[RMDB]
RNA sequence: GGGAACGACUCGAGUAGAGUCGAAAACUUAGCCAUGACGAAAAACCAAUUCAAGCUAGAAAAUUCUUAUUGCCUGUUCAAGAGACUAUCAGAUUGGUUUUGGAACAAGAAGAUACUAAUGGUGAUAGAGUAUAGGGUAUUUCGAUACCCUAUACUCAAAAGAAACAACAACAACAAC
Reactivity to 2A3 in 0.01 (KOAc 150mM, MgCl2 10mM, bicine 150mM(pH8.5), 24C), signal-to-noise 5, nucleotides 027 to 126: c010u080u090a000g000c010c000a000u030g030a040c050g050a040a020a020a020a020c010c000a020a010u080u100c080a140a060g030c010u040a040g060a080a200a070a090u160u040c020u050u090a290u160u080g030c020c070u150g050u190u060c020a020a000g010a010g000a040c000u020a030u040c030a020g020a080u000u010g000g000u010u010u020u040g020g020a040a020c050a070a060g170a060a010g070a160u130a160c040u070a100a010u020g000g010u040g020a050u140a110
Reactivity to DMS in 0.01 (KOAc 150mM, MgCl2 10mM, bicine 150mM(pH8.5), 24C), signal-to-noise 6, nucleotides 027 to 126: c050u000u010a300g000c000c010a020u010g020a230c150g000a060a030a010a030a040c020c010a010a020u000u010c060a130a130g010c140u010a050g000a100a070a050a140u010u000c010u000u000a120u010u010g010c090c110u000g000u010u010c100a040a060g000a030g000a100c030u000a030u000c030a140g000a040u000u000g000g000u000u000u000u000g010g010a110a080c160a060a100g010a090a060g010a130u010a050c100u000a090a060u000g000g020u000g000a170u000a090

The record gives the reactivity of an RNA of 177 nucleotides to 2A3 and DMS. It was measured as part of the RMDB library OK2TST. The DMS profile rests on 5,035 reads. Reactivities are given for positions 27 through 126. For DMS the reverse transcriptase was MarathonRT.